[RMDB]
RNA sequence: GGGAACGACUCGAGUAGAGUCGAAAAACUUCCGGGCAUAGCGGAAGAAGACGUGACACGAUCUUUUCAGAACGAGCUUGAGCAAUUGCCCGCUGAAUGUGAAACCAAGCGAGGACUUUAGGAAAAAUCAUCGCUCGUGCUUCGGUACGAGUGAUGAAAAAGAAACAACAACAACAAC
Reactivity to DMS in 0.01 (KOAc 150mM, MgCl2 10mM, bicine 150mM(pH8.5), 24C), signal-to-noise 9, nucleotides 027 to 126: a060c040u010u010c020c020g000g000g010c050a030u010a150g010c010g000g010a110a030g010a110a020g010a040c020g000u010g020a110c120a200c100g000a060u010c050u000u000u010u010c050a070g020a080a100c090g000a140g010c040u010u010g000a110g000c040a060a100u030u010g000c020c010c010g000c130u030g000a020a030u040g010u020g000a090a100a130c060c030a050a080g000c040g010a090g010g000a080c070u010u010u020a080g000g010a030a060a040a090a120
Reactivity to 2A3 in 0.01 (KOAc 150mM, MgCl2 10mM, bicine 150mM(pH8.5), 24C), signal-to-noise 9, nucleotides 027 to 126: a000c020u030u000c010c000g000g010g010c060a070u060a030g020c010g050g040a060a030g030a010a010g020a020c030g050u110g070a030c020a010c130g110a130u060c030u040u080u050u060c070a060g050a120a030c030g030a050g070c020u070u080g030a020g030c010a060a130u150u040g020c010c000c000g000c030u030g040a060a070u180g030u030g070a070a020a020c020c000a020a010g060c040g060a090g030g060a080c020u120u090u150a110g080g050a060a050a040a020a060